Structure probing data (2A3 and DMS) for a 177-nucleotide construct.

RNA sequence: GGGAACGACUCGAGUAGAGUCGAAAACUAUGGCACCUGUUGAAUUUUAUGAAGACCGCAUCUUGGACUUUAAAGUUCUUGAUAAUGGUAUCAUUAGGGAUGUAAAUCCUGAUGAUAAGUGCUUUGCGCAUAGACUAUACUUCGGUAUAGUCUAUGCAAAAGAAACAACAACAACAAC
Reactivity to 2A3 in 0.01 (KOAc 150mM, MgCl2 10mM, bicine 150mM(pH8.5), 24C), signal-to-noise 1, nucleotides 027 to 126: c010u020a120u090g020g020c010a000c010c000u050g090u110u080g070a200a210u060u060u140u180a060u150g070a050a050g030a020c000c000g000c030a020u000c000u000u020g010g020a020c010u120u090u150a130a300a030g010u010u000c000u020u000g010a030u000a100a060u130g020g010u000a010u000c000a000u020u040a080g000g000g060a000u060g030u190a060a080a050u010c000c010u000g010a020u030g000a000u010a050a070g010u000g050c000u050u060u100g010c060
Reactivity to DMS in 0.01 (KOAc 150mM, MgCl2 10mM, bicine 150mM(pH8.5), 24C), signal-to-noise 3, nucleotides 027 to 126: c020u000a050u010g000g010c030a020c020c090u010g020u010u010g010a130a090u000u010u000u010a040u010g010a120a150g010a060c010c030g020c220a020u010c020u010u000g000g000a020c000u000u010u010a060a110a060g030u000u000c010u000u010g000a040u000a060a120u010g010g010u000a030u000c000a000u000u000a100g020g020g010a030u000g010u020a100a100a040u000c000c000u000g010a040u000g000a010u010a010a060g000u000g000c010u000u000u000g010c300

For 2A3, 1,405 sequencing reads were counted. 2A3 adducts were read by reverse transcription with SuperScript II with manganese. High DMS reactivity at an A or C suggests that its Watson-Crick edge is free.